This 207-nucleotide RNA was probed chemically with 2A3. For 2A3, 2,028 sequencing reads were counted. Values cover nucleotides 27 to 156. The reactions ran in a buffer of 150 mM KOAc, 10 mM MgCl2 and 150 mM bicine (pH 8.5), at 24 C.

RNA sequence: GGGAACGACUCGAGUAGAGUCGAAAAAGGGCCGCGGUGCUCUGGAGUAGAGGCUCUGCUUCAGAACACCAUCGAUCGUCCCUUCUUCUUUACCUUCUUCUGGCUCUUCCGAUGAGACGCGACCGGUGGCAUCACCUCUCGGUUCGUCCCAACCUGCCCUUAGAAAUCUCUUCGGAGAUUUCUAAGGAAAAGAAACAACAACAACAAC
Reactivity to 2A3 in 0.01 (KOAc 150mM, MgCl2 10mM, bicine 150mM(pH8.5), 24C), signal-to-noise 2, nucleotides 027 to 156: a020g000g000g000c030c000g060c040g000g000u000g000c010u000c010u000g010g010a010g000u010a020g010a120g130g090c130u020c000u110g010c000u000u000c000a000g010a030a020c010a010c030c010a010u070c050g100a240u080c000g040u030c010c000c000u030u000c020u020u000c000u070u140u120a120c020c010u080u050c020u110u050c020u100g030g010c010u000c000u020u050c010c020g090a100u110g030a030g020a070c030g040c090g050a030c000c020g030g010u020g030g010c070a110u130c050a050c020c010u040c040u090c010g000g000u050u030c010g000u000c000c000c000a060a070c000c020u050g040c000